[RMDB]
RNA sequence: GGGAACGACUCGAGUAGAGUCGAAAAUAGGCGAACGAGAGGCCCUCUCCUGUGCGGAGUUGUCACGCUGACAAAAUUGUUAUGAUGUCCGAUUCCGGUAGCAUCGCGGCGAUGUUUUCAUAGGACAUCUUAUGAACCCAAGAGCUUCGGGGAAGCAACCGUACUCAUUAUUCGUAAUGAGUACGGUAAAAGAAACAACAACAACAAC
Reactivity to DMS in 0.01 (KOAc 150mM, MgCl2 10mM, bicine 150mM(pH8.5), 24C), signal-to-noise 2, nucleotides 027 to 156: u000a080g020g010c020g010a060a080c060g010a110g020a100g020g000c030c030c010u000c030u000c030c000u020g050u000g020c100g010g010a140g000u020u000g010u000c030a080c040g030c030u030g000a170c080a060a050a100a110u000u030g020u000u000a090u010g010a050u000g000u000c020c010g000a210u000u030c120c030g020g020u010a070g000c030a020u010c020g010c150g000g010c120g020a050u000g000u000u000u010u010c050a070u000a150g030g000a020c030a020u010c020u010u000a020u010g010a080a140c060c030c020a050a130g010a160g010c040u000u010c050g030g000g030g000a070a090g010c030a120
Reactivity to 2A3 in 0.01 (KOAc 150mM, MgCl2 10mM, bicine 150mM(pH8.5), 24C), signal-to-noise 3, nucleotides 027 to 156: u170a030g020g010c010g040a040a020c030g010a070g020a030g110g000c010c000c000u030c010u010c000c000u100g070u120g060c100g030g000a030g000u060u030g020u030c010a020c170g050c060u040g020a010c050a000a100a050a110u110u100g090u120u070a090u180g020a000u010g000u000c000c000g030a040u230u010c040c030g030g050u050a000g000c010a020u020c030g010c110g190g000c060g050a020u020g010u010u070u060u060c070a080u110a030g010g020a000c000a020u000c000u020u000a110u050g040a050a050c010c000c020a100a040g020a010g060c030u080u100c060g010g030g010g040a030a010g020c020a010
Structure probing data (DMS and 2A3) for a 207-nucleotide construct. DMS adducts were read by reverse transcription with MarathonRT. Conditions: 150 mM KOAc, 10 mM MgCl2 and 150 mM bicine (pH 8.5), 24 C. 2A3 adducts were read by reverse transcription with SuperScript II with manganese. In probing experiments dimethyl sulfate is read out at A N1 and C N3, which are open when not base-paired.